[RMDB]
The record gives the reactivity of an RNA of 177 nucleotides to 2A3 and DMS. Values cover nucleotides 27 to 126. In probing experiments dimethyl sulfate is read out at A N1 and C N3, which are open when not base-paired. For DMS the reverse transcriptase was MarathonRT.

RNA sequence: GGGAACGACUCGAGUAGAGUCGAAAAUCUAGACGAUCAGUGAUCUGAGAGUACAGUGCCAUGCAUCACUAGGUACGUGGAUCAGCUAGUGUGUACGUCAUGCUAGACAUGCACCAUGGGAUCGCCACUAACAAUGGAUAUUCGUAUCCAUUGUUAGAAAAGAAACAACAACAACAAC
Reactivity to 2A3 in 0.01 (KOAc 150mM, MgCl2 10mM, bicine 150mM(pH8.5), 24C), signal-to-noise 9, nucleotides 027 to 126: u020c010u020a040g030a080c010g010a010u020c020a040g060u030g080a030u020c010u040g080a060g020a020g200u050a050c030a040g040u030g080c050c040a140u180g050c020a080u060c000a050c040u040a070g160g040u040a020c030g040u070g020g010a070u020c010a010g080c010u030a020g010u020g000u000g010u190a050c090g060u040c050a020u120g100c050u100a050g020a060c010a050u070g000c030a020c020c010a050u070g070g010g020a010u020c020g000c040c010a060
Reactivity to DMS in 0.01 (KOAc 150mM, MgCl2 10mM, bicine 150mM(pH8.5), 24C), signal-to-noise 9, nucleotides 027 to 126: u010c030u000a090g020a050c030g000a030u000c010a150g020u000g010a040u000c010u000g010a120g010a200g010u000a030c050a070g010u000g010c110c070a120u000g020c190a100u000c030a030c030u000a120g020g020u000a010c020g010u010g000g000a050u000c050a070g010c040u000a050g010u010g020u000g010u000a060c160g010u000c010a090u010g010c180u000a090g010a040c020a060u000g000c030a030c020c030a100u000g010g010g010a020u000c020g010c020c080a250